Record summary: This 207-nucleotide RNA was probed chemically with 2A3. 2A3 adducts were read by reverse transcription with SuperScript II with manganese. The 2A3 profile rests on 781 reads. The data come from the RNA Mapping Database (RMDB), library OK3TST. The reactions ran in a buffer of 150 mM KOAc, 10 mM MgCl2 and 150 mM bicine (pH 8.5), at 24 C.
[RMDB]
RNA sequence: GGGAACGACUCGAGUAGAGUCGAAAAUGUUGGCCGCCCAGUGAGUGCUCUCGUCCAUGGCGAUGACCGCGGCCAGCUUCUCCAUCUCCAGGAGCGCCAGGGUAUCUCCCGCCUGCUUGUCGAGCAGGGUCUGCAGGCCCUCCUCAUUGACGGUCAGGACAAAUCGACAAUUCGUUGUCGAUUUGUCAAAAGAAACAACAACAACAAC
Reactivity to 2A3 in 0.01 (KOAc 150mM, MgCl2 10mM, bicine 150mM(pH8.5), 24C), signal-to-noise 1, nucleotides 027 to 156: u150g010u020u010g000g000c000c020g010c020c040c040a080g050u100g110a150g040u230g030c020u000c030u040c060g030u000c080c140a210u300g070g000c030g030a040u130g000a000c010c000g020c010g000g000c010c000a000g000c000u010u000c010u000c000c010a130u080c040u050c040c020a040g010g010a040g040c010g000c030c020a010g060g010g000u140a210u050c130u020c040c000c020g010c000c030u030g000c020u110u150g240u110c020g040a000g000c000a000g000g000g000u060c060u070g040c060a060g000g000c000c000c000u060c020c000u000c020a120u050u100g000a020c000g020g010u070c060a000g050